[RMDB]
RNA sequence: GGGAACGACUCGAGUAGAGUCGAAAACCUUGAGGUGGCCAGCAUGGAAUUGGCGGGCUUGUGGCGGCGCGCGGGAAAAAGCAAAUGGUGAACUAGGUGCGUGUUGUGGUCGUGUUCCUGAAGCGUGGAAUGUGCGAUCUGUGCGCUAGUUCAUACAGGAUGUAUAGAGCUUCGGCUCUAUACAUCCAAAAGAAACAACAACAACAAC
Reactivity to 2A3 in 0.01 (KOAc 150mM, MgCl2 10mM, bicine 150mM(pH8.5), 24C), signal-to-noise 2, nucleotides 027 to 156: c010c070u000u100g110a050g090g020u080g000g040c030c000a010g010c030a040u170g070g120a180a090u050u100g010g000c110g030g000g010c040u040u040g050u090g090g000c090g000g030c110g040c020g000c060g090g030g100a030a040a110a010a020g010c080a030a010a130u110g000g000u010g000a000a000c000u010a000g260g000u050g040c100g010u160g070u160u070g050u110g000g000u000c000g010u000g050u040u000c000c000u010g130a130a090g090c130g160u090g000g040a040a000u050g080u140g100c010g000a000u000c070u050g060u020g050c030g070c010u030a010g010u000u010c000a000u020a060c010a010

Record summary: An RNA of 207 nucleotides, treated with 2A3 and read out base by base. Source: RMDB library RSTRND, as collected in RNAgym. Values cover nucleotides 27 to 156. For 2A3 the reverse transcriptase was SuperScript II with manganese.